[RMDB]
RNA sequence: GGGAACGACUCGAGUAGAGUCGAAAAGAUAUGGACUUAGGAGGACAACAGCGAUAUCUCGGAAACGAGAUGAUCGACAUGUCCUUUAAGUCCUAAGUCAAACCGUACGAAGUUCGCUUCGUACGGACACGUUAUCUGACUUCGGUCAGAUAACGUGAAAAGAAACAACAACAACAAC
Reactivity to DMS in 0.01 (KOAc 150mM, MgCl2 10mM, bicine 150mM(pH8.5), 24C), signal-to-noise 3, nucleotides 027 to 126: g000a010u000a060u020g000g000a010c010u010u010a000g030g020a030g010g010a040c000a080a100c300a100g000c000g000a020u000a020u010c000u010c010g020g000a020a020a050c000g010a020g010a010u000g020a020u000c010g010a040c150a300u010g030u010c010c000u000u000u010a000a020g010u000c000c000u000a010a060g000u000c010a170a150a200c000c000g000u000a010c000g020a020a000g000u000u030c300g010c010u000u000c000g010u000a000c000g000g000a070
Reactivity to 2A3 in 0.01 (KOAc 150mM, MgCl2 10mM, bicine 150mM(pH8.5), 24C), signal-to-noise 4, nucleotides 027 to 126: g000a000u000a010u040g000g000a010c000u010u010a070g120g200a020g020g010a080c040a300a070c120a300g030c010g010a010u000a000u010c010u010c000g010g020a020a010a000c010g010a000g000a010u090g100a070u010c010g030a010c060a180u300g020u030c000c000u000u030u010a000a000g000u000c000c000u000a010a000g000u000c050a090a070a080c010c000g000u010a000c000g000a000a000g030u030u180c240g200c230u020u020c010g000u000a000c000g000g010a020